The data come from the RNA Mapping Database (RMDB), library OK1LIB. An RNA of 177 nucleotides, treated with 2A3 and DMS and read out base by base. Reactivities are given for positions 27 through 126. DMS adducts were read by reverse transcription with MarathonRT.

[RMDB]
RNA sequence: GGGAACGACUCGAGUAGAGUCGAAAAGUCUGUGCCGAAGACGAACGCGUCUUCGACAUGUUCGCUGGCAUCGGCUACUUCACCCUCCCGAUGGCUCGCAGCGGCGCACGGGUGACCGCAACCGAGAUACCACCCAUGACUUCGGUCAUGGGUGGUAAAAAGAAACAACAACAACAAC
Reactivity to 2A3 in 0.01 (KOAc 150mM, MgCl2 10mM, bicine 150mM(pH8.5), 24C), signal-to-noise 3, nucleotides 027 to 126: g060u020c030u040g040u020g000c000c000g140a140a000g060a260c020g010a170a010c170g030c010g140u030c000u160u050c080g000a010c000a030u070g030u030u000c000g000c000u010g010g000c000a010u010c000g000g020c020u040a100c050u040u140c010a110c040c000c030u070c000c020c010g060a100u150g120g000c010u020c040g030c010a070g000c000g030g000c050g070c010a030c110g050g140g020u060g030a050c010c010g000c010a020a020c040c010g010a000g040a030
Reactivity to DMS in 0.01 (KOAc 150mM, MgCl2 10mM, bicine 150mM(pH8.5), 24C), signal-to-noise 1, nucleotides 027 to 126: g080u000c000u000g000u000g000c060c000g000a270a090g060a090c090g050a030a060c270g000c010g000u000c000u180u040c240g000a000c000a000u000g000u000u000c040g040c070u010g060g010c010a000u000c260g000g000c130u000a050c100u000u000c190a110c000c000c000u000c000c000c000g110a150u000g020g010c080u000c010g000c110a170g000c000g000g000c110g000c020a060c210g000g000g000u000g000a220c030c010g000c000a010a180c100c010g000a030g060a240